[RMDB]
RNA sequence: GGGAACGACUCGAGUAGAGUCGAAAACGAAACUGUAUGAAAACAAGGUUUUAGUUUCACCACAUCACGUUCACCUUUUGCUUUACAUGUAUCGCGAAAUGUAAACACUUAUUCAACCAAUUGAUGUCCGUCACGUACUUUUCGAAGUACGUGACGGAAAAGAAACAACAACAACAAC
Reactivity to 2A3 in 0.01 (KOAc 150mM, MgCl2 10mM, bicine 150mM(pH8.5), 24C), signal-to-noise 3, nucleotides 027 to 126: c010g020a000a000a000c060u090g060u190a120u120g210a040a080a010a040c110a080a090g010g000u000u000u020u020a010g030u000u090u020c040a030c020c000a020c020a120u050c020a060c040g050u070u050c000a170c030c000u010u020u180u000g050c060u030u030u000a000c000a120u070g090u130a110u200c040g010c020g100a090a090a000u070g000u020a000a080a000c020a010c050u180u130a080u100u030c010a090a240c000c010a050a090u110u090g010a050u110g060u020